[RMDB]
RNA sequence: GGGAACGACUCGAGUAGAGUCGAAAAGCGCCGCAGGGCAUGCGCAUCGUCAACCAGCGUCAAUUCGACCGGCUGAGUGGAUACCUCGCCGCAGCGAAAACCGACGCUGCAGCCGACGGCGGCGGGGCGGGCCUUUUCCAUUCGUGGAAAAGGCCCGAAAAGAAACAACAACAACAAC
Reactivity to DMS in 0.01 (KOAc 150mM, MgCl2 10mM, bicine 150mM(pH8.5), 24C), signal-to-noise 1, nucleotides 027 to 126: g000c000g060c090c000g060c000a100g010g000g010c000a020u020g000c160g090c140a140u000c010g040u000c050a190a150c150c000a000g000c000g010u000c000a060a240u000u000c000g000a020c300c000g000g000c000u020g010a000g000u020g010g010a200u040a000c300c000u000c000g000c000c020g020c270a100g000c090g000a040a000a110a140c300c170g000a060c000g000c000u000g000c050a190g000c010c200g000a140c000g010g020c000g020g020c000g000g000g000g000
Reactivity to 2A3 in 0.01 (KOAc 150mM, MgCl2 10mM, bicine 150mM(pH8.5), 24C), signal-to-noise 2, nucleotides 027 to 126: g040c010g000c000c000g040c000a050g100g030g070c060a050u270g030c060g070c070a140u140c020g180u080c000a070a150c070c030a020g000c010g000u000c030a010a030u030u000c020g010a040c010c000g030g020c100u180g000a000g030u160g030g120a110u180a160c000c000u000c000g030c010c040g030c050a010g080c010g040a010a020a060a020c070c100g000a000c030g000c030u000g000c010a020g010c000c050g060a160c030g090g000c010g000g060c030g000g000g030g010